The record gives the reactivity of an RNA of 177 nucleotides to DMS. DMS adducts were read by reverse transcription with MarathonRT. Conditions: 150 mM KOAc, 10 mM MgCl2 and 150 mM bicine (pH 8.5), 24 C. The DMS profile rests on 903 reads.

RNA sequence: GGGAACGACUCGAGUAGAGUCGAAAACAUUGUAACUGUACCCAGGUAGCCAGUUACACUUCCAGAGUGUGCACUGUGGUUUCUUCUCUGCUUGAAGAACCUUCCAAGUUGAUGCUGCCCAGACCCAUCCUCCCGCUAAUUUCGAUUAGCGGGAGGAAAAAGAAACAACAACAACAAC
Reactivity to DMS in 0.01 (KOAc 150mM, MgCl2 10mM, bicine 150mM(pH8.5), 24C), signal-to-noise 1, nucleotides 027 to 126: c130a050u000u000g010u000a040a040c050u000g000u000a130c050c010c090a130g020g010u000a130g020c140c030a010g010u010u000a000c010a060c190u000u030c060c080a090g010a060g040u000g000u010g030c080a050c080u000g040u030g000g000u000u000u000c020u000u000c030u000c100u000g000c170u000u000g000a010a030g020a030a050c080c060u010u010c070c060a050a080g000u010u010g000a080u010g000c000u000g020c080c010c030a100g010a130c030c100c040a170